[RMDB]
Conditions: 150 mM KOAc, 10 mM MgCl2 and 150 mM bicine (pH 8.5), 24 C. The record gives the reactivity of an RNA of 177 nucleotides to 2A3. 2A3 adducts were read by reverse transcription with SuperScript II with manganese. The 2A3 profile rests on 470 reads.
RNA sequence: GGGAACGACUCGAGUAGAGUCGAAAAGAAGAGAAGCGCGCGAAUUGGAAACCAGCGAACCAUAUUACGCGCGCAAGGAACCGGGCCUUGGUUCAUUGGAAAGAGUAGAUAAUAUCGCUGGUAAAGACCGGUAUUACCCGUUCGCGGGUAAUACCGGAAAAGAAACAACAACAACAAC
Reactivity to 2A3 in 0.01 (KOAc 150mM, MgCl2 10mM, bicine 150mM(pH8.5), 24C), signal-to-noise 1, nucleotides 027 to 126: g060a070a050g060a000g030a180a000g000c000g000c000g000c000g000a000a000u000u010g000g050a000a080a280c010c000a000g010c000g000a010a040c000c000a000u000a000u190u140a120c000g000c010g010c000g000c000a000a010g050g000a000a010c000c010g000g190g050c000c010u070u170g010g030u020u000c010a020u040u160g080g000a150a080a020g080a000g150u110a000g040a100u200a100a060u100a090u020c000g000c010u000g040g000u010a000a000a000g120a000

2A3 is a SHAPE reagent: it acylates the 2'-hydroxyl of flexible nucleotides of all four kinds.